[RMDB]
RNA sequence: GGGAACGACUCGAGUAGAGUCGAAAAGCGCACACAGGCUUUAUCUGCGUGUGAAAUAGCGGUCGGCAGCUGUGGCGGAGUGUCGAUGUCUCUAGUGGGUGCUCGCGUGGCUCAAUGUGGAGGUGGGGGCACUAAUUUAGUUCGCUAAAUUAGUGCCAAAAGAAACAACAACAACAAC
Reactivity to DMS in 0.01 (KOAc 150mM, MgCl2 10mM, bicine 150mM(pH8.5), 24C), signal-to-noise 2, nucleotides 027 to 126: g000c010g010c010a020c020a050c020a020g000g010c270u000u010u010a050u030c030u020g010c020g020u010g000u010g000a050a100a120u000a110g020c050g010g010u000c080g020g010c010a060g020c050u000g000u000g020g000c040g000g020a070g000u010g010u000c050g010a100u000g010u000c010u000c070u000a090g030u000g010g000g010u000g000c050u000c070g010c080g020u010g000g000c050u000c070a070a080u000g000u000g010g000a090g000g030u000g010g020g010
Reactivity to 2A3 in 0.01 (KOAc 150mM, MgCl2 10mM, bicine 150mM(pH8.5), 24C), signal-to-noise 2, nucleotides 027 to 126: g030c010g020c000a010c010a000c020a030g090g000c070u150u210u130a180u200c020u050g020c010g050u030g020u020g030a050a120a010u160a040g050c050g000g040u040c020g020g000c020a050g000c060u070g010u050g100g000c040g000g020a010g020u070g010u010c040g010a020u060g060u000c010u020c000u030a000g030u070g030g030g020u060g020c030u050c020g060c070g020u030g010g000c010u040c070a080a090u130g020u110g030g060a050g050g060u160g030g010g020